[RMDB]
RNA sequence: GGGAACGACUCGAGUAGAGUCGAAAAGCAAAAAUGCCUUCGCAGCGGCUGUCUGCCAGCUGUAGUUUAUGCCGGAUGCGGCGUGAACGCCUUAUCCGGCCUACGUAGAGCACUGAACUCGUAGGCCCACUACAUCCAGGUUCGCCUGGAUGUAGUGAAAAGAAACAACAACAACAAC
Reactivity to 2A3 in 0.01 (KOAc 150mM, MgCl2 10mM, bicine 150mM(pH8.5), 24C), signal-to-noise 5, nucleotides 027 to 126: g040c040a040a090a070a020a120u110g030c020c020u080u100c080g000c050a020g020c010g100g020c020u080g220u190c150u150g020c020c000a060g010c020u020g000u020a020g000u030u060u070a060u090g020c000c000g030g050a150u230g140c030g040g000c010g020u050g110a110a060c040g020c010c000u190u090a110u080c040c000g000g000c000c000u000a000c000g150u220a010g000a010g060c100a090c280u160g050a130a020c000u020c030g000u010a000g000g020c000c020
Reactivity to DMS in 0.01 (KOAc 150mM, MgCl2 10mM, bicine 150mM(pH8.5), 24C), signal-to-noise 4, nucleotides 027 to 126: g000c080a010a080a080a100a100u000g000c020c050u000u000c110g010c040a030g020c010g010g000c010u000g000u000c200u010g010c000c010a090g030c020u000g000u000a060g010u000u000u000a040u010g020c010c020g000g000a100u000g010c160g000g000c000g040u000g010a080a090c040g010c040c050u000u000a050u010c050c020g000g010c000c000u000a000c050g020u000a070g010a070g010c080a100c270u010g010a080a100c040u000c010g010u000a050g010g000c020c100